[RMDB]
RNA sequence: GGGAACGACUCGAGUAGAGUCGAAAAGGAAAGAAGAUCAAAGUUAGCGAGGAGAUUUAUAAAGUCUAUUGGCAAGAGAAAAAUCAUGAGAAUUACUUGAAGCAGAUAGAUCGAAAAAAUCAACUGCUCAGUGCCAAAAUUUCGAUUUUGGCACUGAAAAAGAAACAACAACAACAAC
Reactivity to DMS in 0.01 (KOAc 150mM, MgCl2 10mM, bicine 150mM(pH8.5), 24C), signal-to-noise 2, nucleotides 027 to 126: g000g000a050a050a110g010a030a060g000a120u040c080a080a120a130g000u020u000a040g050c040g030a040g020g000a200g000a020u000u000u000a010u000a060a120a150g000u010c020u010a040u010u020g000g000c000a030a300g000a020g000a020a110a040a050a020u000c010a190u010g000a200g040a040a020u000u010a060c030u000u000g000a170a060g000c010a030g030a000u010a050g000a000u030c000g020a000a080a170a010a050a010u020c000a040a140c020u020g020c060
Reactivity to 2A3 in 0.01 (KOAc 150mM, MgCl2 10mM, bicine 150mM(pH8.5), 24C), signal-to-noise 3, nucleotides 027 to 126: g080g000a100a060a050g070a030a030g020a050u110c090a070a090a080g110u060u050a020g030c000g020a030g050g010a020g030a030u030u050u040a200u080a030a040a010g000u000c000u010a020u040u060g030g010c010a030a000g020a000g080a110a050a040a000a000u070c050a070u180g100a020g050a230a100u130u060a080c000u010u020g030a160a040g000c000a010g000a040u050a020g010a000u080c040g060a040a020a000a060a000a020u010c000a030a000c000u000g000c000